Chemical mapping of a 177-nucleotide RNA with DMS and 2A3. The 2A3 profile rests on 934 reads. Reactivities are given for positions 27 through 126. 2A3 is a SHAPE reagent: it acylates the 2'-hydroxyl of flexible nucleotides of all four kinds. 2A3 adducts were read by reverse transcription with SuperScript II with manganese. For DMS, 2,388 sequencing reads were counted. Source: RMDB library OK1LIB, as collected in RNAgym.
RNA sequence: GGGAACGACUCGAGUAGAGUCGAAAAUAACCAGACUUGGUAUUUGGUGCAUAAGCCGCGAUGGUGGGCACAGCUCCAAGCUUGCUUAUCCGGGCCGAACUGGGCCUCCCUGCGCGACUCUUAGGGAGGGAUACCUAUGGUUCGCCAUAGGUAUCCCAAAAGAAACAACAACAACAAC
Reactivity to DMS in 0.01 (KOAc 150mM, MgCl2 10mM, bicine 150mM(pH8.5), 24C), signal-to-noise 2, nucleotides 027 to 126: u020a080a100c020c000a010g010a060c010u000u000g000g000u000a060u010u010u050g020g000u000g020c170a150u050a060a040g000c080c000g010c100g020a190u020g010g020u020g000g010g000c000a020c080a050g010c080u000c030c030a110a080g020c000u010u010g020c150u000u100a030u010c300c000g000g020g000c020c000g010a060a030c060u030g000g020g010c030c000u000c260c000c030u000g000c000g020c000g000a030c050u010c010u000u030a120g010g030g020a230
Reactivity to 2A3 in 0.01 (KOAc 150mM, MgCl2 10mM, bicine 150mM(pH8.5), 24C), signal-to-noise 2, nucleotides 027 to 126: u130a010a030c000c000a010g070a140c040u120u120g010g010u110a090u100u120u090g050g000u060g020c010a030u060a170a080g030c010c000g010c070g070a120u250g000g050u040g000g000g000c010a020c010a040g010c000u000c000c000a010a010g000c000u010u010g030c050u060u000a000u020c030c010g050g000g000c010c000g000a040a090c020u020g000g040g010c020c000u000c020c000c000u070g030c050g010c050g000a070c020u050c040u100u030a010g010g060g000a120